Background
The record gives the reactivity of an RNA of 177 nucleotides to 2A3. For 2A3, 552 sequencing reads were counted. As a SHAPE reagent, 2A3 marks flexible, mostly unpaired nucleotides at the ribose 2'-OH.
RNA sequence: GGGAACGACUCGAGUAGAGUCGAAAAUUGCCAUGCCCAAAACGAUGUAGUGGAUCUCAAUUUGCAUUUCGUUUUGCUGCACACUGCUUCUGGGUACUGUGACGGCAACACGGUCGAUUUCAACCCCCGGGCACGAGGAGUUCGCUCCUCGUGCCCGAAAAGAAACAACAACAACAAC
Reactivity to 2A3 in 0.01 (KOAc 150mM, MgCl2 10mM, bicine 150mM(pH8.5), 24C), signal-to-noise 2, nucleotides 027 to 126: u100u090g030c010c010a020u080g000c060c010c000a000a170a000a000c010g000a020u040g020u090a040g060u030g090g140a050u070c020u010c020a160a210u120u160u220g030c040a050u130u130u070c000g010u000u160u070u000g060c030u040g030c060a020c030a000c070u050g030c020u110u020c080u090g030g060g010u040a040c000u030g160u090g000a160c000g000g010c000a000a080c030a010c120g000g070u140c110g070a130u000u000u000c050a010a100c000c010c000c000
Record summary:
The data come from the RNA Mapping Database (RMDB), library OK1LIB.